Chemical mapping of a 177-nucleotide RNA with DMS and 2A3.
RNA sequence: GGGAACGACUCGAGUAGAGUCGAAAAGAUAUGGAGUUGUGGGAGAACCGCAUCGGAAACGAUGUGGUUCAUCGAUCACACUCCUAAGUCAAAGAUCUAUUCCAUUCUUCGGAAUGGAAUAGAUCAACUUCUAUGCAGUGUUCGCACUGCAUAGAAGAAAAGAAACAACAACAACAAC
Reactivity to DMS in 0.01 (KOAc 150mM, MgCl2 10mM, bicine 150mM(pH8.5), 24C), signal-to-noise 3, nucleotides 027 to 126: g010a030u010a300u010g000g000a020g010u010u010g010u000g000g000g010a080g010a010a010c000c000g020c000a000u000c000g010g000a110a070a100c000g010a020u000g010u000g010g010u000u000c000a050u000c160g000a130u010c010a010c010a050c000u000c000c000u000a030a100g000u000c010a070a110a120g000a000u000c000u000a000u000u000c000c000a010u000u000c000u000u020c240g000g000a010a000u000g010g000a010a000u000a000g000a000u000c000a020a110
Reactivity to 2A3 in 0.01 (KOAc 150mM, MgCl2 10mM, bicine 150mM(pH8.5), 24C), signal-to-noise 1, nucleotides 027 to 126: g020a030u070a030u140g020g010a010g040u290u140g010u170g010g000g000a050g010a000a000c000c000g000c000a000u000c010g010g010a070a040a030c010g010a010u000g000u030g000g000u000u000c000a000u020c000g010a030u020c000a000c000a000c000u000c000c000u000a080a010g020u020c060a120a080a100g010a010u030c000u010a000u010u000c010c000a010u000u000c000u030u080c300g110g000a000a000u000g020g000a000a000u000a000g000a000u000c000a000a000
Conditions: 150 mM KOAc, 10 mM MgCl2 and 150 mM bicine (pH 8.5), 24 C.
For DMS, 3,975 sequencing reads were counted.